This 177-nucleotide RNA was probed chemically with DMS and 2A3. 2A3 is a SHAPE reagent: it acylates the 2'-hydroxyl of flexible nucleotides of all four kinds. The DMS profile rests on 1,264 reads. Source: RMDB library OK1LIB, as collected in RNAgym. The RNA was probed in 150 mM KOAc, 10 mM MgCl2 and 150 mM bicine (pH 8.5) at 24 C.
RNA sequence: GGGAACGACUCGAGUAGAGUCGAAAAGGAGAAAAUGCAACUGGCUACAGCCAGCACAUUUGAUGUGAAUAGAUCACUGAAAUUUUUGGGAGACAUCCUUUCCAAAGAUCUAAAUUUCUCUAUAAUAAAUCAUGUUAGCGUUCGCGCUAACAUGAUUAAAAGAAACAACAACAACAAC
Reactivity to DMS in 0.01 (KOAc 150mM, MgCl2 10mM, bicine 150mM(pH8.5), 24C), signal-to-noise 2, nucleotides 027 to 126: g000g000a060g000a050a000a000a020u000g020c120a100a180c000u000g000g000c010u010a250c300a200g000c000c000a010g010c300a080c000a010u000u000u030g000a070u030g000u030g000a050a160u000a140g000a120u000c000a030c050u000g020a100a180a060u000u000u000u000u000g010g000g000a040g010a210c270a110u010c090c000u010u000u000c000c020a000a000a020g000a050u010c000u000a050a150a060u020u000u000c000u000c000u020a150u010a060a100u020a110
Reactivity to 2A3 in 0.01 (KOAc 150mM, MgCl2 10mM, bicine 150mM(pH8.5), 24C), signal-to-noise 3, nucleotides 027 to 126: g040g000a020g060a040a030a000a000u060g040c080a150a070c040u000g030g000c020u260a170c060a040g000c000c000a000g000c020a030c000a020u070u170u190g080a070u070g010u010g030a040a070u110a140g050a060u100c010a030c090u100g100a060a110a140u110u060u010u030u020g000g030g010a040g020a020c040a120u150c050c000u020u030u030c000c000a000a050a000g010a000u010c010u120a030a120a120u030u080u000c020u000c000u040a090u070a300a110u160a090